[RMDB]
RNA sequence: GGGAACGACUCGAGUAGAGUCGAAAACUUGGUUUGGAAGGAUCUCUCAGUCAAAAAGAACCUUUCGGAUGUCUCUUGAUAUUUCACAUUAAUGGACUUUUCAUAAGGACCACAUGAUGGGAGAGCAGUGAGAAGUUUGGGGAUGGCCAAAGCUGGGACGCGAUCUAUAAUUCGUUAUAGAUCGCGUAAAAGAAACAACAACAACAAC
Reactivity to DMS in 0.01 (KOAc 150mM, MgCl2 10mM, bicine 150mM(pH8.5), 24C), signal-to-noise 2, nucleotides 027 to 156: c060u020u010g030g010u010u010u000g020g010a080a060g010g000a150u000c020u020c050u000c090a140g040u000c110a070a080a120a140a070g000a050a080c040c020u010u000u010c040g020g000a040u010g010u000c020u010c040u020u010g000a090u000a060u010u000u000c060a070c020a120u000u000a110a060u000g000g000a300c000u010u000u030u000c100a070u010a060a040g010g000a120c010c010a030c010a080u010g000a090u000g010g030g020a030g000a070g020c040a070g040u010g000a070g020a060a120g040u000u000u000g010g060g010g030a080u010g030g050c030c020a070a010a160g020c030u020g010g000g030
Reactivity to 2A3 in 0.01 (KOAc 150mM, MgCl2 10mM, bicine 150mM(pH8.5), 24C), signal-to-noise 2, nucleotides 027 to 156: c020u040u030g030g010u100u050u060g030g020a020a010g020g020a060u000c020u000c000u000c030a000g150u080c070a090a090a030a070a030g050a100a100c000c000u010u030u040c030g030g030a030u030g050u030c010u000c000u080u080g030a070u050a160u130u300u110c110a170c040a110u040u080a070a060u120g010g000a020c000u130u090u050u050c080a040u130a240a060g020g080a150c050c030a030c050a110u210g030a010u070g010g050g000a030g000a020g000c050a010g010u010g040a110g000a070a050g040u060u100u080g000g000g000g030a020u040g010g000c020c040a050a070a000g030c050u010g010g000g010